Background:
An RNA of 177 nucleotides, treated with DMS and 2A3 and read out base by base. The RNA was probed in 150 mM KOAc, 10 mM MgCl2 and 150 mM bicine (pH 8.5) at 24 C. The data come from the RNA Mapping Database (RMDB), library OK2TRN. 2A3 adducts were read by reverse transcription with SuperScript II with manganese. The 2A3 profile rests on 3,065 reads.
RNA sequence: GGGAACGACUCGAGUAGAGUCGAAAAUUCGUCUCUCAAGAGAGCUUACCCCUCCCUGAAACCAGUCUGUGACAGAGUGGAAUCUGUGACGAGUGAGCGGAAGAAAGAAAAAGAGUGUACGAUGGAAACUACAACGUGAUUUCGAUCACGUUGUAGUAAAAGAAACAACAACAACAAC
Reactivity to DMS in 0.01 (KOAc 150mM, MgCl2 10mM, bicine 150mM(pH8.5), 24C), signal-to-noise 4, nucleotides 027 to 126: u020u000c020g010u010c010u000c000u000c040a160a160g010a170g000a110g010c020u000u000a200c030c000c030c040u000c010c010c010u000g010a070a070a200c050c020a050g000u000c010u000g010u000g010a110c090a010g020a040g010u010g000g010a050a190u000c020u000g030u000g000a040c130g000a070g020u010g000a060g010c040g000g000a090a080g010a060a050a080g000a020a060a100a080a080g000a040g000u000g010u020a010c050g010a030u000g000g020a110a120
Reactivity to 2A3 in 0.01 (KOAc 150mM, MgCl2 10mM, bicine 150mM(pH8.5), 24C), signal-to-noise 2, nucleotides 027 to 126: u040u000c000g010u000c010u000c000u000c040a110a030g100a010g020a030g110c030u040u110a090c000c000c000c010u000c000c030c000u020g000a050a030a020c010c000a030g090u000c010u050g080u080g120a040c030a010g020a020g020u030g000g050a020a030u000c010u040g030u050g040a020c010g010a020g060u030g030a040g040c040g010g010a040a030g050a050a170a030g110a030a110a000a020a000g030a000g000u060g040u040a020c010g000a020u050g030g040a130a120